RNA sequence: GGGAACGACUCGAGUAGAGUCGAAAAUGGGCUACCAGUAAGCGAAAAAUGAUACAGGACGAAAAAAACAUAAUUCGAGAUUUUUCAGGAUGGAUUUUUUUAGGAAUCUAUCAAAACUAUUCUGAUGCAACGUAGAGCACGUUCGCGUGCUCUACAAUCUAGUGUCUAUGUUCGCAUAGACACUAGAAAAAGAAACAACAACAACAAC
Reactivity to 2A3 in 0.01 (KOAc 150mM, MgCl2 10mM, bicine 150mM(pH8.5), 24C), signal-to-noise 2, nucleotides 027 to 156: u070g030g000g000c010u030a060c010c030a040g030u070a050a040g030c040g070a050a050a000a030a030u070g030a030u060a100c060a060g030g040a020c020g060a070a020a030a010a020a070a010c050a020u130a080a070u130u090c040g010a030g020a220u110u110u030u060u050c010a000g000g000a000u000g010g010a010u000u020u020u000u020u020u100a040g050g000a140a060u110c000u020a010u000c020a030a000a000a030c020u010a010u040u020c000u020g020a060u070g020c030a050a010c090g000u020a000g000a000g010c000a000c000g000u000u000c040g010c000g060u000g010c000u000c000u000a000c000a000a010
Reactivity to DMS in 0.01 (KOAc 150mM, MgCl2 10mM, bicine 150mM(pH8.5), 24C), signal-to-noise 1, nucleotides 027 to 156: u000g010g010g050c010u010a060c070c030a140g010u000a090a090g040c010g010a010a060a060a120a070u000g000a160u010a070c050a060g030g040a210c040g000a000a000a020a050a100a070a100c020a090u000a070a150u000u000c030g010a150g010a220u000u000u000u000u000c000a060g020g000a040u020g020g010a010u030u060u000u000u000u000u000a100g000g010a100a050u000c000u000a040u000c010a050a000a060a080c030u010a070u010u000c040u010g040a060u010g000c070a050a150c120g000u010a030g000a010g010c010a020c040g040u020u010c220g040c010g080u000g010c000u010c000u030a010c000a040a050